[RMDB]
RNA sequence: GGGAACGACUCGAGUAGAGUCGAAAAGAGACGGCUUGAUAGGCUGGGGAGUUGUCUUUUUCGCCGGUCAACCCUUGCGUGUUUGCUCUUAUAUUAUCAAUCGCAGCAUUGAUUGCUGAAGGGCUGCCACCGAUAUCUAGUUCGCUAGAUAUCGGUGAAAAGAAACAACAACAACAAC
Reactivity to 2A3 in 0.01 (KOAc 150mM, MgCl2 10mM, bicine 150mM(pH8.5), 24C), signal-to-noise 4, nucleotides 027 to 126: g040a000g010a010c020g010g000c030u110u100g020a060u150a070g060g010c050u060g060g040g030g020a090g040u090u040g040u080c000u080u090u030u020u090c050g000c030c010g020g040u040c010a030a100c020c000c000u030u070g050c070g060u080g020u050u100u130g010c010u000c000u090u080a130u010a050u220u120a060u070c030a060a020u040c080g040c210a050g000c030a060u010u090g070a040u050u120g020c060u080g070a020a030g020g020g000c010u010g010c030
Reactivity to DMS in 0.01 (KOAc 150mM, MgCl2 10mM, bicine 150mM(pH8.5), 24C), signal-to-noise 5, nucleotides 027 to 126: g010a080g020a070c050g010g020c030u000u000g010a100u010a140g010g010c010u000g010g000g000g020a050g010u010u010g000u010c020u000u000u000u000u000c080g010c020c020g010g020u010c040a080a130c140c010c030u000u000g010c070g030u010g020u000u010u010g000c010u010c020u010u000a100u010a120u010u010a060u000c050a030a030u000c080g010c100a050g020c060a200u010u000g000a050u000u000g010c130u010g000a070a040g010g000g000c010u000g010c090